Record summary
An RNA of 177 nucleotides, treated with 2A3 and DMS and read out base by base. 2A3 adducts were read by reverse transcription with SuperScript II with manganese. The RNA was probed in 150 mM KOAc, 10 mM MgCl2 and 150 mM bicine (pH 8.5) at 24 C. The DMS profile rests on 3,773 reads. For 2A3, 2,857 sequencing reads were counted. For DMS the reverse transcriptase was MarathonRT.

RNA sequence: GGGAACGACUCGAGUAGAGUCGAAAAGAAAGCUCCUCAGCCGUGUGGAGGAGAAUGGCUAUAACCACGGAAACCUGAGGAAACAGGAAGCCACAACGCAAGCCAUGUGGUUAGCACACGGAAGAAAACCGUGAUGCUAUUUCGAUAGCAUCACGGUAAAAGAAACAACAACAACAAC
Reactivity to 2A3 in 0.01 (KOAc 150mM, MgCl2 10mM, bicine 150mM(pH8.5), 24C), signal-to-noise 3, nucleotides 027 to 126: g070a040a140a010g010c010u000c000c010u010c010a070g080c010c000g000u000g020u010g000g000a000g000g010a000g020a030a020u080g010g000c010u050a030u130a260a050c020c020a060c020g060g020a100a090a030c000c010u030g020a040g070g300a090a010a000c020a000g010g000a050a030g050c000c010a030c020a130a020c090g070c150a170a020g010c070c000a030u090g000u010g010g000u020u040a030g000c000a000c000a000c000g030g010a000a030g030a020a050a000
Reactivity to DMS in 0.01 (KOAc 150mM, MgCl2 10mM, bicine 150mM(pH8.5), 24C), signal-to-noise 3, nucleotides 027 to 126: g000a080a150a060g000c030u010c000c000u000c030a190g020c000c010g030u000g000u010g030g000a040g000g000a020g000a060a030u050g000g040c050u010a190u010a070a080c060c020a040c080g000g040a120a090a130c060c000u000g000a220g030g020a160a100a030c020a010g000g000a170a090g000c000c000a030c100a070a080c190g010c100a120a040g030c030c050a100u020g000u000g000g000u000u020a050g030c000a020c000a000c000g050g010a210a030g040a080a080a030